[RMDB]
RNA sequence: GGGAACGACUCGAGUAGAGUCGAAAAUCCUGCGGGAUGUCGGCGAAGCGGAUCGGCGUCCGGCGCAUCUCGCCGAACUCGGAGAUCAGCUUGCCGUCCUCGCUGUAGACCUUGAGGGGGAUCUGCACACUUGAUGUGUGUUCGCACACAUCAAGUGAAAAGAAACAACAACAACAAC
Reactivity to 2A3 in 0.01 (KOAc 150mM, MgCl2 10mM, bicine 150mM(pH8.5), 24C), signal-to-noise 3, nucleotides 027 to 126: u000c000c000u010g010c000g020g000g020a110u160g060u060c010g000g000c110g100a030a010g010c010g010g030a000u010c020g110g050c050g060u000c010c000g020g000c010g000c010a180u120c140u130c070g000c000c010g010a010a010c010u020c070g140g130a170g000a080u020c010a010g010c020u020u020g000c010c000g010u020c000c010u000c000g010c000u010g020u000a030g020a030c010c020u030u090g080a250g050g060g030g010g000a080u000c020u000g000c040a030
Reactivity to DMS in 0.01 (KOAc 150mM, MgCl2 10mM, bicine 150mM(pH8.5), 24C), signal-to-noise 2, nucleotides 027 to 126: u000c000c020u000g000c010g000g010g010a140u020g020u000c000g030g000c000g030a040a020g000c010g010g030a020u000c000g010g050c230g000u010c020c000g020g000c000g000c300a160u020c160u010c020g000c010c010g010a030a020c010u000c050g010g000a240g000a020u000c000a060g010c000u000u000g000c000c020g010u010c010c000u000c000g000c030u000g030u000a010g010a040c040c010u000u000g020a140g000g000g000g000g000a070u000c010u000g000c000a200
Record summary:
Structure probing data (2A3 and DMS) for a 177-nucleotide construct. The RNA was probed in 150 mM KOAc, 10 mM MgCl2 and 150 mM bicine (pH 8.5) at 24 C. The data come from the RNA Mapping Database (RMDB), library RFMREP.